[RMDB]
RNA sequence: GGGAACGACUCGAGUAGAGUCGAAAACUCGUCUCGCUGGGUAGGCGUAGUUCCUUCACCUGAUGACCGACUGAAGCGCGCACGGUCGCAAGGGUAAGGAGGUUCGAAGCCUACCUGUGCUGAAGCGCGCACGGCAACCGAAAGGUGCGGGUACGUACUAAUUGUGCAGGUUCGCCUGCACAAUUAGAAAAGAAACAACAACAACAAC
Reactivity to 2A3 in 0.01 (KOAc 150mM, MgCl2 10mM, bicine 150mM(pH8.5), 24C), signal-to-noise 1, nucleotides 027 to 156: c000u000c020g010u000c000u000c000g000c020u000g000g020g000u000a010g000g020c010g000u010a030g000u070u030c000c010u060u010c200a180c020c010u130g110a300u040g000a050c010c010g000a020c000u040g040a250a060g040c000g000c000g000c000a070c020g000g000u030c000g030c050a170a300g000g000g000u000a000a020g000g030a000g000g160u150u160c050g110a100a000g000c000c000u010a000c000c000u000g000u000g020c000u000g040a150a070g010c000g000c000g000c000a070c020g030g000c000a000a030c000c000g060a110a000a080g010g000u000g010c010g000g000g050u170a020c010g030u060a020